[RMDB]
RNA sequence: GGGAACGACUCGAGUAGAGUCGAAAAGAGGUAGUAGCACAGCAGGUCACUCCAAAUGACCAUGCUAAUGCCAGAGCAUUUUCGCAUCUGGCCAGUAAACUAAUCGAGCUGGAGGUUCCUACCACAGUGUUCGCUUCAUGUUCGCAUGAAGCGAACAAAAAGAAACAACAACAACAAC
Reactivity to DMS in 0.01 (KOAc 150mM, MgCl2 10mM, bicine 150mM(pH8.5), 24C), signal-to-noise 1, nucleotides 027 to 126: g000a090g010g020u000a000g040u000a150g000c040a120c230a030g040c000a070g030g030u000c000a000c080u030c270c300a050a120a180u060g010a080c000c000a230u000g000c000u000a080a230u010g050c000c000a030g000a030g000c000a090u020u010u040u000c220g000c020a040u000c000u000g000g000c000c030a000g000u000a060a060a100c050u000a040a090u000c180g050a150g000c100u000g000g000a050g000g000u000u000c040c020u010a000c080c000a080c240a060g030
Reactivity to 2A3 in 0.01 (KOAc 150mM, MgCl2 10mM, bicine 150mM(pH8.5), 24C), signal-to-noise 2, nucleotides 027 to 126: g070a000g030g000u030a010g000u000a010g000c000a000c000a070g020c020a100g040g010u010c030a030c070u090c030c060a010a060a120u110g000a010c000c000a040u030g000c000u100a080a120u100g000c000c000a010g000a000g000c020a120u020u000u180u270c020g020c020a300u000c000u000g000g000c000c000a030g020u040a000a000a180c050u020a140a060u190c120g000a020g040c000u000g000g050a090g050g040u000u030c000c000u040a020c000c000a030c000a020g000

This 177-nucleotide RNA was probed chemically with DMS and 2A3. 2A3 is a SHAPE reagent: it acylates the 2'-hydroxyl of flexible nucleotides of all four kinds. The 2A3 profile rests on 1,173 reads. The RNA was probed in 150 mM KOAc, 10 mM MgCl2 and 150 mM bicine (pH 8.5) at 24 C.